Conditions: 150 mM KOAc, 10 mM MgCl2 and 150 mM bicine (pH 8.5), 24 C.
An RNA of 177 nucleotides, treated with 2A3 and read out base by base.
The 2A3 profile rests on 517 reads.
[RMDB]
RNA sequence: GGGAACGACUCGAGUAGAGUCGAAAAGAAGAGCAGUCAGAUAAUCUUGUGCAGAAUGAAUGCUCGUAACUGCAUCGCACAAGUAGAUGUAGAUAACUUUAAUCUCGCAUAGCGGAGGAGCCGCAGAGCCGUGGACGAGUUUCGACUCGUCCACGGCAAAAGAAACAACAACAACAAC
Reactivity to 2A3 in 0.01 (KOAc 150mM, MgCl2 10mM, bicine 150mM(pH8.5), 24C), signal-to-noise 1, nucleotides 027 to 126: g130a080a000g000a010g000c000a010g200u000c000a000g000a070u230a130a030u170c010u050u050g060u070g030c000a000g000a190a060u060g000a000a000u000g130c010u010c060g000u000a100a000c040u000g070c000a000u000c000g080c040a000c000a080a080g010u010a120g110a150u070g000u000a000g000a070u150a130a000c000u060u000u000a060a060u080c000u070c130g000c130a060u080a170g000c000g000g000a040g010g000a000g230c000c000g000c060a060g030a000